This 207-nucleotide RNA was probed chemically with 2A3. The 2A3 profile rests on 509 reads. Values cover nucleotides 27 to 156.
[RMDB]
RNA sequence: GGGAACGACUCGAGUAGAGUCGAAAACGUCACACGCUAUGUCCUUCUCCGAUGAGCUGAUGCAGCUAAGAUCGCAAUUUACCUACGCCACCCAGACUAAAGAAGACACCGAAAGUAAAAUUCAUGACCUGAUGGUUCACAUAGAAGAUACCGUGCAGGUCCUGAGUUAUUUCGAUAACUCAGGACCAAAAGAAACAACAACAACAAC
Reactivity to 2A3 in 0.01 (KOAc 150mM, MgCl2 10mM, bicine 150mM(pH8.5), 24C), signal-to-noise 2, nucleotides 027 to 156: c030g060u050c010a130c020a040c040g070c050u080a070u150g050u030c040c040u050u030c050u000c010c050g130a150u150g020a010g000c000u050g030a300u120g010c030a030g010c050u070a090a000g030a090u050c030g000c080a010a020u000u000u130a020c000c000u020a020c070g040c040c020a000c010c010c000a010g000a040c100u110a170a000a000g090a060a010g020a030c030a000c040c040g030a040a020a020g090u150a010a040a070a030u220u250c020a030u070g050a000c000c010u090g060a130u130g080g000u070u000c030a030c010a090u030a050g030a070a000g000a060u040a000c040c010g080u250g060c020a090